[RMDB]
RNA sequence: GGGAACGACUCGAGUAGAGUCGAAAAGAUAUGGACCCUGAACUACGCUACGCACAGCCGACGAUCGACGUGAGUAUCGGAAACGAUACUCACGUCGGGAGGCUGUGAAAGCGCAGGGUCCUAAGUCGUAAUAGGUAGUGUUCGCACUACCUAUUACAAAAGAAACAACAACAACAAC
Reactivity to DMS in 0.01 (KOAc 150mM, MgCl2 10mM, bicine 150mM(pH8.5), 24C), signal-to-noise 5, nucleotides 027 to 126: g000a090u010a300u010g000g010a020c000c000c010u010g010a130a100c180u020a300c040g010c000u010a050c300g000c010a020c000a010g010c000c000g000a090c240g000a050u010c000g010a030c000g040u000g000a010g020u000a000u000c000g020g010a090a080a230c000g020a010u000a010c000u000c000a010c000g000u000c000g000g000g010a080g010g010c000u000g040u000g000a010a020a030g010c000g000c010a010g000g010g010u010c000c000u000a010a090g000u010c110
Reactivity to 2A3 in 0.01 (KOAc 150mM, MgCl2 10mM, bicine 150mM(pH8.5), 24C), signal-to-noise 4, nucleotides 027 to 126: g060a070u170a110u230g000g010a000c000c010c000u000g030a140a050c130u220a060c300g010c000u020a030c300g000c030a000c000a010g000c030c010g240a300c030g030a110u040c010g000a010c010g000u010g000a010g000u010a000u000c010g030g000a080a040a010c000g000a000u020a000c000u000c010a000c000g000u000c000g000g010g000a010g000g020c000u010g000u000g000a000a000a000g010c010g000c000a000g010g010g010u000c000c000u000a010a010g020u040c040
The record gives the reactivity of an RNA of 177 nucleotides to DMS and 2A3. The RNA was probed in 150 mM KOAc, 10 mM MgCl2 and 150 mM bicine (pH 8.5) at 24 C. DMS adducts were read by reverse transcription with MarathonRT.